[RMDB]
RNA sequence: GGGAACGACUCGAGUAGAGUCGAAAAGGCGGAAGAAACAAAAAACAACCUGAUGCAGGUAGCCAGUGAGCAUAUUGCGCCGCUUCAGGAUGCUGCAGAUCUGGAAAUUGCAACGGAGGAAGAAACCAAUUUCUGCUGUCUUCGGACAGCAGAAAUUAAAAGAAACAACAACAACAAC
Reactivity to DMS in 0.01 (KOAc 150mM, MgCl2 10mM, bicine 150mM(pH8.5), 24C), signal-to-noise 1, nucleotides 027 to 126: g000g020c000g000g000a060a020g000a060a050a140c080a000a050a040a070a010a030c170a090a070c000c000u000g000a120u000g000c000a050g000g000u030a130g000c040c020a030g030u000g040a120g000c110a110u040a070u000u000g060c020g000c050c000g010c280u000u000c120a000g000g030a020u000g000c060u000g000c000a000g000a000u040c050u030g000g010a070a010a130u040u030g000c080a080a130c010g000g030a060g030g000a180a050g000a090a070a110c260c010
Reactivity to 2A3 in 0.01 (KOAc 150mM, MgCl2 10mM, bicine 150mM(pH8.5), 24C), signal-to-noise 2, nucleotides 027 to 126: g060g000c040g010g000a080a050g070a010a290a040c110a120a000a010a000a000a000c070a000a020c000c000u020g000a030u060g020c160a160g060g000u020a010g010c010c000a010g070u020g300a000g000c070a030u220a050u230u230g000c000g000c010c000g010c000u040u040c000a000g030g000a030u120g030c030u000g110c010a030g000a210u010c000u070g000g000a070a070a070u100u130g000c020a040a000c060g010g000a010g100g000a170a090g020a090a090a000c000c010
The record gives the reactivity of an RNA of 177 nucleotides to DMS and 2A3.
For DMS the reverse transcriptase was MarathonRT.
The reactions ran in a buffer of 150 mM KOAc, 10 mM MgCl2 and 150 mM bicine (pH 8.5), at 24 C.